[RMDB]
RNA sequence: GGGAACGACUCGAGUAGAGUCGAAAAAUCCGACGAGCUGAACGCUUUCGAAGGAAAGCUUGACCAGCUAAUCUUCUGCAACGCCAUUACGAGGACUGCCCUUAGAGGCUCAUGGCGAUAGGUCACCCCGCCGGUCGGUCAGCUGCUUUUGCCGAAACUCCUUACAGAAGUUCGCUUCUGUAAGGAGAAAAGAAACAACAACAACAAC
Reactivity to DMS in 0.01 (KOAc 150mM, MgCl2 10mM, bicine 150mM(pH8.5), 24C), signal-to-noise 2, nucleotides 027 to 156: a070u000c010c010g020a120c040g010a110g030c000u000g030a120a150c110g000c030u020u000u020c060g030a290a150g020g000a040a070a000g000c030u000u000g000a220c080c020a140g080c010u000a080a100u000c010u000u000c070u000g000c030a200a090c050g010c050c000a100u000u000a110c100g020a200g060g010a170c090u000g010c010c020c000u000u000a100g020a160g030g030c020u000c090a070u010g010g050c040g000a140u000a050g040g000u000c110a060c050c010c020c070g010c050c010g010g010u000c070g020g010u000c030a150g000c020u000g020c010u000u000u020u010g020c020c000g000a140a130a240
Reactivity to 2A3 in 0.01 (KOAc 150mM, MgCl2 10mM, bicine 150mM(pH8.5), 24C), signal-to-noise 3, nucleotides 027 to 156: a000u020c000c010g020a010c040g020a010g000c000u050g000a130a020c040g000c000u050u020u050c040g080a070a050g120g020a000a040a000g000c000u060u100g020a020c040c000a000g010c000u020a070a060u060c080u150u030c020u070g010c060a080a060c020g000c010c020a050u100u130a050c100g040a060g030g110a060c050u100g000c000c000c000u040u110a040g030a100g080g000c010u010c020a000u020g000g000c020g040a060u070a060g020g000u030c040a080c000c010c010c000g020c020c000g060g030u040c010g020g020u030c010a020g010c040u080g010c020u050u060u100u070g040c010c010g000a040a050a040